[RMDB]
RNA sequence: GGGAACGACUCGAGUAGAGUCGAAAACGAUCCGUUCUGGAUAUCACCACCACUCAUACUGGUGGGUGAGUACAUAAAACUGCCUACUUGAAAACUGAUACUAAAGCGGUUGGUAUUGGCACUGUCCUGCGUGACAGAGUUUCGACUCUGUCACGCAAAAAGAAACAACAACAACAAC
Reactivity to 2A3 in 0.01 (KOAc 150mM, MgCl2 10mM, bicine 150mM(pH8.5), 24C), signal-to-noise 1, nucleotides 027 to 126: c020g000a060u000c000c020g060u200u130c070u170g020g000a020u000a080u050c010a010c020c000a000c000c000a000c010u060c050a030u110a110c020u000g030g000u000g030g000g020u020g030a000g030u120a030c100a030u200a080a100a030a020c010u010g010c010c000u000a040c010u080u130g110a070a130a010a050c010u030g020a040u040a190c040u250a130a130a100g010c040g100g000u010u010g000g000u110a080u060u080g010g040c010a020c120u100g050u090c030c000
Reactivity to DMS in 0.01 (KOAc 150mM, MgCl2 10mM, bicine 150mM(pH8.5), 24C), signal-to-noise 2, nucleotides 027 to 126: c100g000a030u010c000c030g000u000u010c120u010g040g000a020u010a160u010c000a030c010c010a000c000c010a030c040u000c300a070u000a230c300u010g000g000u000g040g000g000u000g000a060g000u000a100c130a170u010a080a080a100a150c070u000g010c020c030u000a030c060u000u000g020a090a050a110a090c060u010g010a070u010a140c120u030a010a070a080g010c030g010g010u000u010g000g000u000a060u020u000g010g010c060a060c090u020g010u000c040c010
Record summary
The record gives the reactivity of an RNA of 177 nucleotides to 2A3 and DMS. Source: RMDB library OK2TST, as collected in RNAgym. DMS adducts were read by reverse transcription with MarathonRT. The RNA was probed in 150 mM KOAc, 10 mM MgCl2 and 150 mM bicine (pH 8.5) at 24 C. The DMS profile rests on 888 reads. 2A3 adducts were read by reverse transcription with SuperScript II with manganese.